An RNA of 177 nucleotides, treated with DMS and 2A3 and read out base by base. Reactivities are given for positions 27 through 126. For 2A3, 3,535 sequencing reads were counted. The reactions ran in a buffer of 150 mM KOAc, 10 mM MgCl2 and 150 mM bicine (pH 8.5), at 24 C.

[RMDB]
RNA sequence: GGGAACGACUCGAGUAGAGUCGAAAAAGCGUCGACGAACCUUCCAACCUUCCAAAGCAGCAAUAGCUGAACCUUCCAACCUUCCAAUCUACUCGAGAGGAGGAGGAGGAGGAGGAGGAGGAAUUAACCCUCACAAUGUAUUCGUACAUUGUGAGGGAAAAGAAACAACAACAACAAC
Reactivity to DMS in 0.01 (KOAc 150mM, MgCl2 10mM, bicine 150mM(pH8.5), 24C), signal-to-noise 2, nucleotides 027 to 126: a090g000c090g030u000c040g070a150c060g010a120a140c010c000u000u000c000c060a110a060c060c010u010u020c030c030a000a070a130g010c010a030g010c070a150a120u000a060g050c010u000g020a070a160c020c000u000u000c030c020a130a090c070c070u000u020c020c030a070a130u010c000u000a010c050u000c040g000a090g010a170g000g000a120g000g010a140g000g000a110g000g000a160g000g000a120g000g000a150g000g000a110g000g010a300a090u010u010a040a130
Reactivity to 2A3 in 0.01 (KOAc 150mM, MgCl2 10mM, bicine 150mM(pH8.5), 24C), signal-to-noise 3, nucleotides 027 to 126: a000g060c040g090u040c020g030a070c040g020a100a090c020c000u040u000c030c020a100a100c030c020u060u000c010c020a060a090a070g010c020a010g000c000a070a280u050a230g000c020u000g020a070a050c000c020u050u000c010c030a100a080c020c010u050u050c000c030a050a050u010c000u070a060c040u050c030g030a030g000a020g020g040a020g000g030a040g020g050a050g020g030a060g020g060a040g010g030a040g010g020a020g000g030a010a010u090u050a070a060